[RMDB]
Source information
The record gives the reactivity of an RNA of 207 nucleotides to 2A3 and DMS. It was measured as part of the RMDB library ARCHII. For DMS the reverse transcriptase was MarathonRT.

RNA sequence: GGGAACGACUCGAGUAGAGUCGAAAAGACAUACUAUCAGUCUCUAAGGAUUGAAAGUAAGUUGAUAAUGACCAAGUCAAGGUCCAGGCUGGCAACAGAGCAGACAGAGCGAGGCACAUCGAUGGGUAGCGAGGAAAGUCGACUUAAAGUCGUCCAACAAGUCCUAGAAGUUCGCUUCUAGGACUUGAAAAGAAACAACAACAACAAC
Reactivity to 2A3 in 0.01 (KOAc 150mM, MgCl2 10mM, bicine 150mM(pH8.5), 24C), signal-to-noise 2, nucleotides 027 to 156: g000a000c020a010u110a020c000u040a070u040c000a000g030u030c040u060c110u270a190a050g110g000a000u010u010g020a020a010a000g030u030a040a080g020u000u000g090a120u050a230a140u130g070a020c020c030a080a020g060u040c070a060a030g030g000u010c030c000a020g010g000c010u090g030g000c030a040a000c030a160g070a000g030c020a000g050a080c010a000g030a000g070c020g020a030g070g000c040a000c010a060u130c070g050a040u070g030g060g030u030a030g000c010g010a030g030g040a100a040a000g000u020c020g010a020c000u080u120a060a000a000g000u020c020g000u000c000c000a020a020
Reactivity to DMS in 0.01 (KOAc 150mM, MgCl2 10mM, bicine 150mM(pH8.5), 24C), signal-to-noise 2, nucleotides 027 to 156: g020a080c000a220u000a010c010u000a150u020c010a020g030u000c000u010c090u040a290a180g010g000a020u000u010g010a020a130a020g030u010a000a100g070u000u000g010a180u000a040a110u000g010a100c000c030a090a170g000u000c060a090a110g030g000u000c010c040a090g010g060c000u010g000g000c020a050a090c070a100g010a120g010c010a080g040a040c080a120g020a090g000c030g000a070g010g070c030a030c090a090u000c040g020a090u000g000g000g030u000a080g000c000g010a070g030g000a020a050a070g030u000c000g030a030c020u000u010a080a040a120g000u000c000g020u000c000c000a070a150
2A3 adducts were read by reverse transcription with SuperScript II with manganese. For DMS, 2,439 sequencing reads were counted. High 2A3 reactivity points to a flexible backbone, as in loops and unpaired stretches. The 2A3 profile rests on 861 reads.